[RMDB]
RNA sequence: GGGAACGACUCGAGUAGAGUCGAAAAGGUACAUCCUUACCUGUUACCUUAGCAAUAAGGUUACAGAUCAUGAUGAUUGGAUUCUAUGAAUACGUGAUUAUAUACCGUAUUUGUUUAGGGACUGCAAUAUAUGCAUUCCAUUCGUGGAAUGCAUAUAAAAAGAAACAACAACAACAAC
Reactivity to DMS in 0.01 (KOAc 150mM, MgCl2 10mM, bicine 150mM(pH8.5), 24C), signal-to-noise 9, nucleotides 027 to 126: g000g010u010a090c100a070u010c010c060u000u000a080c060c000u000g010u000u000a010c000c000u000u000a010g000c300a080a120u000a010a000g000g010u000u000a030c020a020g000a070u010c130a080u010g000a060u010g010a120u010u020g010g010a110u010u010c030u000a050u020g000a020a020u000a010c010g010u020g010a080u010u020a120u020a170u020a080c080c010g000u000a010u000u000u000g010u010u000u000a100g000g000g010a220c030u000g000c150a070a100
Reactivity to 2A3 in 0.01 (KOAc 150mM, MgCl2 10mM, bicine 150mM(pH8.5), 24C), signal-to-noise 7, nucleotides 027 to 126: g090g000u090a070c030a060u100c010c010u010u040a050c000c000u010g010u010u040a020c000c000u000u020a010g010c030a090a140u020a020a000g000g000u000u010a000c010a000g010a020u050c050a050u080g060a010u030g020a050u050u170g080g020a080u120u020c030u070a070u080g020a010a010u020a010c020g060u110g100a100u230u130a140u070a010u050a200c000c020g010u010a010u010u010u030g170u030u060u090a070g040g000g030a030c070u060g000c060a120a000